RNA sequence: GGGAACGACUCGAGUAGAGUCGAAAAACUCCGUCUACGGACGGAGAAGUCGUUGUGGCGACUAUAACCAAGCUCUUUAAGCCACAAGCGUUGCUGAUGAGGUUUCAUAACAUCAGCAGGUAGAGAAACUUAUUGUUAUGUUCGCAUAACAAUAAGUAAAAGAAACAACAACAACAAC
Reactivity to 2A3 in 0.01 (KOAc 150mM, MgCl2 10mM, bicine 150mM(pH8.5), 24C), signal-to-noise 1, nucleotides 027 to 126: a000c010u000c000c000g000u000c000u010a140c290g100g000a000c000g020g000a000g030a000a010g010u010c050g000u030u120g000u000g040g040c000g040a030c000u050a040u070a180a000c010c010a120a000g020c010u000c000u030u100u140a000a010g000c000c000a040c000a000a090g000c040g000u090u000g050c000u010g000a000u030g050a060g250g170u080u110u030c130a100u280a240a000c000a010u000c010a000g000c010a000g030g000u100a000g020a030g000a060a100

Conditions: 150 mM KOAc, 10 mM MgCl2 and 150 mM bicine (pH 8.5), 24 C. Chemical mapping of a 177-nucleotide RNA with 2A3. It was measured as part of the RMDB library RFM100. Reactivities are given for positions 27 through 126. For 2A3 the reverse transcriptase was SuperScript II with manganese.